[RMDB]
RNA sequence: GGGAACGACUCGAGUAGAGUCGAAAAGCGUCGGUGAUUUGCACUUUAAUCUCAGUUAUCAAAAUUUUAUCUGGCGAAACUAAUUACGCUCUUGCUGCUUAAUCGAAUCAUAGUAGAUUAGCUUAAUCCAGGCACCAGGUGCCAGGACGAGACAUCAGUUAGUAUAAUGCUUCGGCAUUAUACUAACAAAAGAAACAACAACAACAAC
Reactivity to DMS in 0.01 (KOAc 150mM, MgCl2 10mM, bicine 150mM(pH8.5), 24C), signal-to-noise 2, nucleotides 027 to 156: g010c090g050u000c000g050g010u000g020a090u000u010u010g010c020a040c020u000u000u000a070a120u010c010u010c030a100g020u010u010a100u010c040a090a060a090a160u000u000u000u000a050u030c060u000g020g010c010g010a060a110a300c070u000a030a060u000u020a110c060g020c050u000c060u000u000g020c020u000g020c030u000u000a080a130u000c030g000a110a130u010c110a110u000a100g010u000a110g000a100u000u000a110g000c030u000u000a140a060u000c000c020a090g000g010c030a030c020c100a110g100g000u010g030c070c010a050g000g010a070c010g000a180g010a020c040a100u010c070a200
Reactivity to 2A3 in 0.01 (KOAc 150mM, MgCl2 10mM, bicine 150mM(pH8.5), 24C), signal-to-noise 6, nucleotides 027 to 156: g040c050g010u010c020g020g050u050g040a110u050u050u150g040c030a020c060u070u120u150a120a160u060c050u020c060a060g030u080u080a110u150c060a070a090a150a170u100u190u110u120a100u070c040u050g030g010c020g030a080a040a010c030u030a060a130u120u100a050c060g020c030u010c020u020u070g040c040u010g000c000u110u160a030a020u040c020g010a030a000u070c090a100u080a070g030u010a010g010a030u020u010a000g000c000u010u040a020a010u000c010c010a030g010g000c010a010c040c100a090g150g060u020g000c000c010a010g010g000a000c020g010a010g010a010c010a060u080c030a040

Source: RMDB library ARCHII, as collected in RNAgym. This 207-nucleotide RNA was probed chemically with DMS and 2A3. DMS adducts were read by reverse transcription with MarathonRT. The reactions ran in a buffer of 150 mM KOAc, 10 mM MgCl2 and 150 mM bicine (pH 8.5), at 24 C. 2A3 adducts were read by reverse transcription with SuperScript II with manganese.